[RMDB]
RNA sequence: GGGAACGACUCGAGUAGAGUCGAAAAUGGACCUCCAGGAGCCAUGGGAUCCGUGGAGUACCCGGGAUAUCCCUUCUCCACACUCCUUCCCCCCUGCGGGGCCCCCCCAUAAGAUGGCGAGAAAUCCUAAUCCUACCGUUCGCGGUAGGAAAAAGAAACAACAACAACAAC
Reactivity to 2A3 in 0.01 (KOAc 150mM, MgCl2 10mM, bicine 150mM(pH8.5), 24C), signal-to-noise 3, nucleotides 027 to 129: u130g000g010a050c010c010u000c020c010a020g000g040a030g010c000c040a080u090g000g000g020a060u030c040c060g030u040g000g000a020g020u140a080c070c080c000g010g000g010a150u120a100u230c010c000c000u000u000c010u020c000c010a030c010a000c040u070c020c000u030u080c030c000c020c000c000c050u020g040c150g010g000g010g030c010c000c000c010c040c010c000a010u030a010a030g030a020u040g020g030c030g020a050g110a040a050a030u050c020c010u020a020a030
Reactivity to DMS in 0.01 (KOAc 150mM, MgCl2 10mM, bicine 150mM(pH8.5), 24C), signal-to-noise 5, nucleotides 027 to 129: u030g000g000a120c130c000u000c050c080a100g000g020a130g000c060c050a090u000g000g000g000a020u050c070c050g060u040g050g000a090g040u030a080c020c100c000g030g020g020a150u060a120u060c020c000c040u000u000c040u010c030c010a060c110a110c110u010c000c020u000u000c020c030c010c030c010c070u000g000c150g020g030g010g110c000c000c000c000c000c000c000a050u080a040a070g000a110u000g000g030c080g000a120g030a070a120a100u020c020c000u020a160a230
The record gives the reactivity of an RNA of 170 nucleotides to 2A3 and DMS. DMS adducts were read by reverse transcription with MarathonRT. For 2A3 the reverse transcriptase was SuperScript II with manganese.